The record gives the reactivity of an RNA of 177 nucleotides to 2A3 and DMS. For 2A3, 539 sequencing reads were counted. 2A3 adducts were read by reverse transcription with SuperScript II with manganese. The reactions ran in a buffer of 150 mM KOAc, 10 mM MgCl2 and 150 mM bicine (pH 8.5), at 24 C.
RNA sequence: GGGAACGACUCGAGUAGAGUCGAAAACAGUUAAAAUUAAUAAUUGCAUUAUUUCUUAACAAAAAGACAUCCUAGCUUUACCAUGUUGUGAAACAAUCCAUUAAUUGUAAUAUUACGUUGAGCGCCUUAUACGAGAGAAUUUCGAUUCUCUCGUAUAAAAAGAAACAACAACAACAAC
Reactivity to 2A3 in 0.01 (KOAc 150mM, MgCl2 10mM, bicine 150mM(pH8.5), 24C), signal-to-noise 2, nucleotides 027 to 126: c000a000g010u100u120a010a140a120a270u120u030a070a010u090a080a070u030u180g040c010a040u000u130a020u020u130u000c000u060u000a100a090c010a050a220a040a000a000g060a040c010a060u010c010c090u010a000g010c010u050u080u040a080c020c010a030u040g000u000u000g120u040g010a060a040a020c030a070a070u070c060c010a040u090u110a030a060u110u070g060u060a030a060u030a110u300u170a060c020g000u000u010g000a000g040c020g000c000c000u000
Reactivity to DMS in 0.01 (KOAc 150mM, MgCl2 10mM, bicine 150mM(pH8.5), 24C), signal-to-noise 1, nucleotides 027 to 126: c070a050g000u000u010a050a080a050a040u010u010a040a030u000a080a120u030u020g010c020a300u000u010a060u000u000u010c040u000u010a070a080c000a020a050a040a060a040g010a060c070a060u000c110c030u000a080g000c020u000u000u000a100c140c070a120u000g020u000u000g010u000g010a080a070a010c020a010a040u000c150c070a040u010u010a030a010u010u000g000u010a020a060u000a090u030u020a060c120g000u000u000g010a070g010c060g000c020c030u010